[RMDB]
RNA sequence: GGGAACGACUCGAGUAGAGUCGAAAAGGUAGCCAGGGCCUGGAGCCGGAUGCCGAGAAGGAGGCCUGCAACUCAUUUCCCCAUUAGACGUUCUGAGAACACGUGCACCAGCUUCCAAGCUUUCUCCGACUUACAGGUAGUUCGCUACCUGUAAGUCAAAAGAAACAACAACAACAAC
Reactivity to DMS in 0.01 (KOAc 150mM, MgCl2 10mM, bicine 150mM(pH8.5), 24C), signal-to-noise 2, nucleotides 027 to 126: g010g020u000a040g020c070c050a110g010g000g000c020c050u000g020g020a120g030c020c010g000g000a100u010g050c010c040g030a100g020a100a120g010g000a110g010g040c020c020u000g010c070a080a070c030u000c030a060u010u000u000c010c000c000c130a160u010u010a080g010a120c090g000u000u000c100u010g000a080g010a120a060c110a060c060g010u000g000c030a090c050c020a070g000c020u000u000c020c040a060a090g000c110u010u000u000c030u010c010c300
Reactivity to 2A3 in 0.01 (KOAc 150mM, MgCl2 10mM, bicine 150mM(pH8.5), 24C), signal-to-noise 1, nucleotides 027 to 126: g010g030u020a000g030c050c040a030g030g000g030c020c040u090g020g020a040g050c020c010g030g030a060u060g060c000c030g020a020g030a120a050g070g050a010g000g000c000c040u030g020c020a030a040c000u010c060a060u020u000u050c000c000c000c000a070u060u110a070g000a060c040g020u050u000c050u010g080a070g030a120a010c060a030c140g060u050g040c030a020c030c000a020g030c000u140u040c040c010a070a030g030c010u050u020u020c030u000c030c000